[RMDB]
Source information
Chemical mapping of a 177-nucleotide RNA with DMS and 2A3. Values cover nucleotides 27 to 126. As a SHAPE reagent, 2A3 marks flexible, mostly unpaired nucleotides at the ribose 2'-OH. 2A3 adducts were read by reverse transcription with SuperScript II with manganese.

RNA sequence: GGGAACGACUCGAGUAGAGUCGAAAAGUUUGCUAUAAUAGUGAUUAUGCAGCUAAGGGUUACAUUGCUGGAAUACAGAAUUUUAAGGAAACGCUGUAUUAUCAGAACAAUGUCUUUAUGUCUGAAGCAAUUGACACAUGUUCGCAUGUGUCAAUUGAAAAGAAACAACAACAACAAC
Reactivity to DMS in 0.01 (KOAc 150mM, MgCl2 10mM, bicine 150mM(pH8.5), 24C), signal-to-noise 4, nucleotides 027 to 126: g010u000u000u010g000c010u010a080u000a080a080u010a130g020u020g010a250u000u000a040u000g030c000a020g000c020u000a070a080g010g020g000u010u000a090c010a020u000u000g010c000u000g000g000a020a000u000a000c010a020g010a050a080u010u010u000u020a100a200g030g010a060a040a080c300g020c000u000g000u000a000u000u010a070u010c000a000g000a100a140c020a010a020u000g000u000c090u000u000u010a040u010g000u000c040u000g000a090a100g000
Reactivity to 2A3 in 0.01 (KOAc 150mM, MgCl2 10mM, bicine 150mM(pH8.5), 24C), signal-to-noise 2, nucleotides 027 to 126: g020u050u100u120g000c010u060a040u060a270a170u070a140g090u060g100a020u030u110a020u100g040c010a010g040c010u020a030a020g060g010g000u060u110a010c000a010u010u000g000c000u010g020g040a000a010u010a020c010a000g000a040a020u040u090u080u160a220a070g120g000a070a040a030c060g010c010u000g050u000a020u000u020a140u020c000a000g010a080a040c010a000a010u010g020u000c010u060u080u070a110u130g070u050c050u010g010a070a000g040